[RMDB]
RNA sequence: GGGAACGACUCGAGUAGAGUCGAAAAAGGUCAGGUAGGGAGGCUCUCCCAGGAGUGGCAAGGGUGAAGCCAGGUGAAGAAAGGUUUGUUUGUUCUUUGACCUGAUCCUGGCACCAGCACUGAGGGCUGAGAACCCUGGAAGUUUCCUGAAUGAUGAGUGAAAAUACGGAUUCGUCCGUAUUUUCACAAAAGAAACAACAACAACAAC
Reactivity to DMS in 0.01 (KOAc 150mM, MgCl2 10mM, bicine 150mM(pH8.5), 24C), signal-to-noise 2, nucleotides 027 to 156: a080g000g020u000c010a020g000g000u000a250g000g030g020a140g010g020c030u000c040u000c040c020c050a100g010g000a100g000u010g020g010c050a040a080g010g010g010u000g010a120a170g030c030c000a050g010g010u000g000a190a100g000a060a070a050g000g010u000u010u020g020u010u000u000g010u000u000c090u000u000u010g020a050c040c000u000g000a110u010c010c020u040g040g020c040a130c040c010a170g000c020a080c030u000g010a140g020g020g050c030u000g010a180g010a030a030c000c000c000u000g020g020a060a160g000u010u000u000c030c010u000g010a170a180u000g000a120u010g000a240
Reactivity to 2A3 in 0.01 (KOAc 150mM, MgCl2 10mM, bicine 150mM(pH8.5), 24C), signal-to-noise 3, nucleotides 027 to 156: a050g100g010u020c020a020g010g040u080a010g050g000g020a000g070g000c040u040c050u020c000c020c020a030g020g040a110g000u120g040g060c140a170a140g110g000g000u070g040a070a010g000c000c010a000g000g020u060g030a020a030g080a140a110a010g030g090u060u100u070g090u040u130u100g140u130u060c120u100u050u120g060a050c000c010u000g000a010u040c000c000u000g010g000c000a020c000c000a010g050c000a030c030u060g040a050g050g110g000c020u050g020a040g020a160a080c000c000c000u000g000g010a040a030g010u010u020u030c000c000u040g090a110a060u060g020a010u050g000a010

Source: RMDB library OK3TST, as collected in RNAgym. Structure probing data (DMS and 2A3) for a 207-nucleotide construct. Reactivities are given for positions 27 through 156. For DMS, 4,140 sequencing reads were counted. For DMS the reverse transcriptase was MarathonRT.